An RNA of 177 nucleotides, treated with DMS and 2A3 and read out base by base. For 2A3 the reverse transcriptase was SuperScript II with manganese. For DMS, 2,751 sequencing reads were counted. The RNA was probed in 150 mM KOAc, 10 mM MgCl2 and 150 mM bicine (pH 8.5) at 24 C. It was measured as part of the RMDB library OK2TRN. DMS adducts were read by reverse transcription with MarathonRT. The 2A3 profile rests on 1,834 reads.

[RMDB]
RNA sequence: GGGAACGACUCGAGUAGAGUCGAAAAAUCCAGCUAUGGAGCUGCUAACGACGUAUCAAUGCAUCCUCUCAGCCACGCACCAGCACGCUCUCCAGGUCGAUGGGGCCGGAUGUCUCGCCACACAGGCUCAUGCUCCACUUUUCGAAGUGGAGCAUGAAAAAGAAACAACAACAACAAC
Reactivity to DMS in 0.01 (KOAc 150mM, MgCl2 10mM, bicine 150mM(pH8.5), 24C), signal-to-noise 3, nucleotides 027 to 126: a120u000c040c010a060g020c090u020a080u020g030g010a070g010c090u000g020c070u010a090a110c100g020a090c100g010u000a080u010c090a100a080u000g010c070a040u000c060c040u000c070u000c060a060g010c030c050a040c090g000c030a080c050c070a040g020c080a080c100g010c050u000c020u010c040c050a050g000g010u000c060g000a080u000g010g000g010g010c070c050g000g000a070u000g000u010c030u000c040g000c010c020a060c100a070c130a090g010g000c080
Reactivity to 2A3 in 0.01 (KOAc 150mM, MgCl2 10mM, bicine 150mM(pH8.5), 24C), signal-to-noise 2, nucleotides 027 to 126: a020u040c010c000a010g000c020u070a080u190g050g060a030g020c020u000g020c060u100a120a010c060g120a010c030g070u070a020u160c090a140a050u110g040c020a060u080c020c010u020c030u020c010a020g020c050c000a050c040g000c000a010c010c010a020g040c030a000c090g030c000u030c000u030c050c010a040g050g050u070c030g040a140u100g060g000g060g020c020c010g010g020a020u030g010u020c030u000c080g050c020c000a100c000a000c010a050g000g040c010